[RMDB]
RNA sequence: GGGAACGACUCGAGUAGAGUCGAAAAUGCACACUUUCAGCGGAAUCCACUGACCACGAUGACAUAUCGAAAUGCUCGAGGAUUCCGAGGGCGAUCAAGGCCACGAUGCCCUGGCCGUUGGGCGGUACGGACUAGUGUCUUUCGAGACACUAGUCCGAAAAGAAACAACAACAACAAC
Reactivity to 2A3 in 0.01 (KOAc 150mM, MgCl2 10mM, bicine 150mM(pH8.5), 24C), signal-to-noise 1, nucleotides 027 to 126: u110g030c030a070c000a000c090u040u080u210c090a000g040c020g010g040a010a000u000c040c020a030c150u150g050a070c020c000a000c060g080a060u060g130a050c070a080u300a010u010c000g090a120a070a130u070g000c060u010c000g040a060g000g020a020u000u000c010c000g010a040g040g020g000c090g020a020u090c090a080a140g050g000c020c020a030c020g100a100u140g020c050c040c000u010g000g020c020c040g000u040u030g050g050g000c070g000g070u120a040
Reactivity to DMS in 0.01 (KOAc 150mM, MgCl2 10mM, bicine 150mM(pH8.5), 24C), signal-to-noise 1, nucleotides 027 to 126: u020g020c050a020c070a070c200u000u020u000c060a070g000c000g030g030a020a070u020c040c000a130c090u000g000a070c070c140a110c030g010a060u000g000a110c200a120u010a040u030c020g000a130a050a070u000g010c130u000c020g000a100g010g000a120u010u010c000c010g010a030g010g000g000c090g000a040u020c090a100a070g040g000c000c130a020c140g000a100u010g000c060c000c050u000g000g000c000c010g030u000u000g010g030g040c000g010g020u000a080
An RNA of 177 nucleotides, treated with 2A3 and DMS and read out base by base. The reactions ran in a buffer of 150 mM KOAc, 10 mM MgCl2 and 150 mM bicine (pH 8.5), at 24 C.